This 177-nucleotide RNA was probed chemically with 2A3 and DMS.
The DMS profile rests on 6,904 reads.
[RMDB]
RNA sequence: GGGAACGACUCGAGUAGAGUCGAAAAAAAUGUCUGUGAGAAGGUCGGAGUUUCCCAACGCUUGGGGUAUGACGGAUUUCUGUCAUACUACAGUGGGGCGAAAUUGCGCACUUACUCGCGGGCGAAACUAAUAAGUCAGGUUCGCCUGACUUAUUAGAAAAGAAACAACAACAACAAC
Reactivity to 2A3 in 0.01 (KOAc 150mM, MgCl2 10mM, bicine 150mM(pH8.5), 24C), signal-to-noise 3, nucleotides 027 to 126: a000a000a030u130g000u010c010u000g010u000g000a010g010a000a010g000g020u030c010g020g040a010g010u000u010u000c000c000c020a040a100c010g020c040u100u160g190g040g020g000u000a000u000g000a000c010g030g050a120u120u250u100c020u020g000u000c000a000u000a000c000u010a020c000a000g000u010g000g020g010g000c100g010a010a000a010u020u060g090c020g000c010a020c020u010u090a170c000u000c000g000c000g000g000g010c000g020a050a000a000
Reactivity to DMS in 0.01 (KOAc 150mM, MgCl2 10mM, bicine 150mM(pH8.5), 24C), signal-to-noise 5, nucleotides 027 to 126: a050a040a050u010g010u000c010u000g020u000g000a020g010a090a050g000g000u000c010g010g000a030g010u000u000u000c000c030c000a040a050c010g010c020u010u010g020g000g010g000u000a000u000g000a010c000g010g010a300u010u010u020c010u010g000u000c000a000u000a000c000u000a040c030a020g010u000g000g000g000g020c300g010a010a010a010u000u000g000c010g000c110a030c010u000u000a130c010u000c000g010c020g020g010g000c000g000a070a060a140